The record gives the reactivity of an RNA of 207 nucleotides to 2A3 and DMS. 2A3 adducts were read by reverse transcription with SuperScript II with manganese. For DMS, 8,874 sequencing reads were counted.
RNA sequence: GGGAACGACUCGAGUAGAGUCGAAAACGCCACCGGACGCUGGCAUGUCCGGGGUAUUAAAUCCAUGGUGAUCGAGGCGGCGGACAAUAUCACCCUCAAAACCGGUGAGUUUGUGGUGGAGGCUGACACCACGCGCAUUAACAGCGAGGUGGUGAUCUCCAAUUGAUAAGUUCGCUUAUCAAUUGGAAAAAGAAACAACAACAACAAC
Reactivity to 2A3 in 0.01 (KOAc 150mM, MgCl2 10mM, bicine 150mM(pH8.5), 24C), signal-to-noise 3, nucleotides 027 to 156: c060g030c020c010a160c030c000g010g020a010c010g030c060u110g050g070c080a050u130g010u010c010c020g000g000g000g010u020a060u020u250a060a100a020u040c040c030a060u100g040g000u080g020a100u070c080g000a040g020g030c030g030g020c030g020g020a010c030a010a030u060a040u150c020a030c010c010c000u150c060a090a160a070a080c060c010g050g010u060g010a070g030u060u180u180g020u040g010g030u030g010g040a030g040g000c080u030g010a010c000a000c000c000a000c000g020c000g000c000a070u170u200a250a070c020a070g010c010g020a030g000g090u010g000g000u020g040a100u010c010
Reactivity to DMS in 0.01 (KOAc 150mM, MgCl2 10mM, bicine 150mM(pH8.5), 24C), signal-to-noise 3, nucleotides 027 to 156: c050g010c040c010a040c010c000g010g020a030c010g010c080u010g030g000c100a150u000g010u000c010c030g000g030g000g000u000a050u000u000a030a110a080u010c020c030a130u000g010g030u000g010a130u000c020g010a130g000g020c050g000g010c030g030g020a090c040a060a090u000a280u010c010a030c000c010c020u000c040a100a060a110a100c160c140g010g010u000g000a050g010u000u000u000g050u000g000g020u000g000g000a070g020g020c050u010g030a160c000a010c000c000a010c010g000c020g040c020a150u000u000a100a150c170a190g010c020g000a060g010g020u010g030g010u000g000a100u000c040
The 2A3 profile rests on 4,338 reads.